The data come from the RNA Mapping Database (RMDB), library OK3TST. Chemical mapping of a 207-nucleotide RNA with 2A3 and DMS. Reactivities are given for positions 27 through 156. As a SHAPE reagent, 2A3 marks flexible, mostly unpaired nucleotides at the ribose 2'-OH. For 2A3 the reverse transcriptase was SuperScript II with manganese. For DMS the reverse transcriptase was MarathonRT.
RNA sequence: GGGAACGACUCGAGUAGAGUCGAAAAGCACCAAUACGUUUGCCAAUUUCACUAGCAACGACCUCAUUGAUCGUUGAUUCACGCCCAUGAUCAUUAACAAACCGCUUGCACCAGUAAACAUUGCCGUCACUUGUACGCGCAGGGAAAGGCCUUGUCCGACUCUGUAGGAUUUCGAUCCUACAGAGUCAAAAGAAACAACAACAACAAC
Reactivity to 2A3 in 0.01 (KOAc 150mM, MgCl2 10mM, bicine 150mM(pH8.5), 24C), signal-to-noise 5, nucleotides 027 to 156: g070c030a030c070c040a030a050u150a060c040g020u010u050u080g010c000c020a050a050u060u050u100c080a100c050u080a030g010c000a000a010c010g020a050c010c030u180c070a240u060u190g080a120u070c040g010u020u010g040a130u120u110c080a030c110g020c000c010c010a010u070g030a040u070c020a040u050u130a070a070c060a080a050a010c020c020g040c050u030u070g040c070a060c020c020a070g040u140a020a130a030c040a060u030u080g010c040c020g060u050c030a060c120u060u050g030u080a100c100g030c020g000c050a010g010g020g050a050a130a020g040g000c030c010u040u040g020u050c030c030
Reactivity to DMS in 0.01 (KOAc 150mM, MgCl2 10mM, bicine 150mM(pH8.5), 24C), signal-to-noise 1, nucleotides 027 to 156: g000c040a100c040c040a100a080u010a040c090g010u000u000u010g000c020c020a070a070u000u000u000c010a070c030u000a160g020c030a000a030c020g000a060c000c010u000c300a150u030u030g000a010u010c010g010u030u010g020a090u000u000c080a090c050g030c010c020c010a100u000g000a040u000c030a090u000u000a050a070c060a060a070a060c000c010g000c070u000u000g020c010a050c030c030a140g020u000a070a040a110c070a080u010u000g000c020c020g000u000c040a040c130u030u020g000u000a080c100g020c120g060c070a050g010g050g010a050a070a120g010g020c030c000u000u000g010u020c020c010